An RNA of 207 nucleotides, treated with 2A3 and read out base by base. Values cover nucleotides 27 to 156. It was measured as part of the RMDB library RNAMAK. For 2A3 the reverse transcriptase was SuperScript II with manganese.
RNA sequence: GGGAACGACUCGAGUAGAGUCGAAAAGCGUACUACCUUCUAACCAAGAGCAACAGCUAUAUCAAGAGUGUCCCAAAUAGGACACUCGUAGUAUAGACAUGCUCUUGAUGAAAGAAGGUAUCGCAAAGGUUACAACAUCUUCGGAUGUUGUAACCAACGUACGAUCUGACUUCGGUCAGAUCGUACGAAAAGAAACAACAACAACAAC
Reactivity to 2A3 in 0.01 (KOAc 150mM, MgCl2 10mM, bicine 150mM(pH8.5), 24C), signal-to-noise 1, nucleotides 027 to 156: g000c010g030u060a020c000u020a010c020c000u000u010c000u000a060a170c020c000a010a000g000a000g020c000a010a150c020a040g040c000u010a020u000a000u030c040a070a000g000a000g020u000g000u000c000c010c030a170a170a060u300a090g010g010a020c000a000c000u030c000g000u010a000g000u000a000u000a000g140a140c030a030u020g000c000u000c000u000u000g000a000u010g060a030a130a040g000a000a000g000g030u010a000u030c000g050c000a100a040a130g000g010u000u000a000c000a010a000c010a000u000c020u030u090c300g080g000a000u000g000u020u000g000u000a000a000c000c000a000a020